This 177-nucleotide RNA was probed chemically with 2A3 and DMS. The reactions ran in a buffer of 150 mM KOAc, 10 mM MgCl2 and 150 mM bicine (pH 8.5), at 24 C. Reactivities are given for positions 27 through 126.

RNA sequence: GGGAACGACUCGAGUAGAGUCGAAAAGUCGAUAUUCAAGGUGUUGAUGAUCUUUACACUGAUCCUCAAAUUCAUACACCCGAUGGUAAAGGAUUUGGUCUUGGUAAUCUUGGUAAAGCAGGUAUCAAGUACCAAUUUGCUUCGGCAAAUUGGUACUAAAAGAAACAACAACAACAAC
Reactivity to 2A3 in 0.01 (KOAc 150mM, MgCl2 10mM, bicine 150mM(pH8.5), 24C), signal-to-noise 2, nucleotides 027 to 126: g060u060c110g030a130u010a020u170u270c190a050a090g210g000u110g000u030u070g000a070u030g000a000u020c080u000u300u040a100c210a070c090u050g030a030u160c000c000u000c120a150a170a000u230u150c160a020u030a050c000a010c000c030c050g050a000u090g000g100u220a140a110a120g110g000a020u100u000u150g000g080u030c000u180u050g000g020u130a090a080u020c050u000u030g140g000u090a170a070a040g140c020a120g180g010u210a040u140c000a130
Reactivity to DMS in 0.01 (KOAc 150mM, MgCl2 10mM, bicine 150mM(pH8.5), 24C), signal-to-noise 1, nucleotides 027 to 126: g000u050c000g010a210u000a020u040u000c150a100a100g000g000u010g000u020u000g000a080u000g010a040u000c000u000u000u060a060c240a020c190u000g000a010u010c050c060u030c060a140a000a050u040u010c130a160u010a160c140a110c060c050c130g000a180u120g010g000u000a070a120a030g000g000a090u020u000u000g000g030u000c150u000u040g020g000u000a010a000u000c110u020u000g000g000u000a050a070a300g000c000a000g000g000u040a000u000c070a120

Background: For DMS, 927 sequencing reads were counted.